[RMDB]
RNA sequence: GGGAACGACUCGAGUAGAGUCGAAAAGAGACCUGGUGGCAGGAUUGGGGGACUCUGACAGCCGGAUGAGGGCUGCAGUGGGCAUGGCAGUAGCAGGCAUCGCAAAGUGGGACGUUCCCGCAGCCUGCCUGACCAAACGAUUCGUCGUUUGGUCAGGAAAAGAAACAACAACAACAAC
Reactivity to DMS in 0.01 (KOAc 150mM, MgCl2 10mM, bicine 150mM(pH8.5), 24C), signal-to-noise 1, nucleotides 027 to 126: g000a160g000a130c020c030u030g000g030u020g010g000c020a040g000g010a130u000u010g030g010g010g010g000a150c090u010c030u000g010a090c050a020g020c070c080g000g020a130u000g000a170g000g010g020c000u000g010c020a030g010u010g000g000g010c070a090u030g020g060c000a070g020u010a110g000c000a020g000g000c010a090u010c020g030c090a080a100a090g000u010g020g020g000a100c030g020u000u010c010c000c000g010c050a030g000c010c020u010g010